This 177-nucleotide RNA was probed chemically with 2A3 and DMS. Conditions: 150 mM KOAc, 10 mM MgCl2 and 150 mM bicine (pH 8.5), 24 C. DMS adducts were read by reverse transcription with MarathonRT. Values cover nucleotides 27 to 126. It was measured as part of the RMDB library 15KREP.
RNA sequence: GGGAACGACUCGAGUAGAGUCGAAAAACCUACAUACAUUGUAUGUAGACCCUAAGUAUCAAGUCAUUGUCUUAAAAGACAAUGUACUUUCUUCUAUGCUUAGAUUGCACACCGUUGAGUCAGGUGAGAUCCAGAUUACGUUCGCGUAAUCUGGAUCAAAAGAAACAACAACAACAAC
Reactivity to 2A3 in 0.01 (KOAc 150mM, MgCl2 10mM, bicine 150mM(pH8.5), 24C), signal-to-noise 2, nucleotides 027 to 126: a000c000c020u000a000c000a000u000a000c040a090u140u300g000u010a000u000g010u010a000g070a050c030c000c000u000a050a020g020u000a030u130c100a030a000g020u000c010a000u010u000g000u000c000u060u140a130a060a020a050g010a000c030a000a000u000g000u000a000c000u110u020u000c030u070u020c040u050a030u020g010c010u020u030a030g020a130u110u300g040c040a020c000a010c030c010g030u030u100g140a260g290u110c070a030g010g020u020g010a040
Reactivity to DMS in 0.01 (KOAc 150mM, MgCl2 10mM, bicine 150mM(pH8.5), 24C), signal-to-noise 2, nucleotides 027 to 126: a160c300c000u000a000c010a060u000a020c000a260u010u020g030u000a010u000g020u000a000g010a070c070c020c000u000a010a020g020u000a040u010c240a010a000g000u010c000a020u010u000g000u000c000u020u010a070a100a160a100g010a000c000a000a000u000g020u010a000c000u010u010u030c120u020u000c280u020a130u000g020c000u000u010a020g010a140u000u000g000c210a070c020a010c060c020g030u050u000g000a080g030u000c070a090g020g000u010g000a120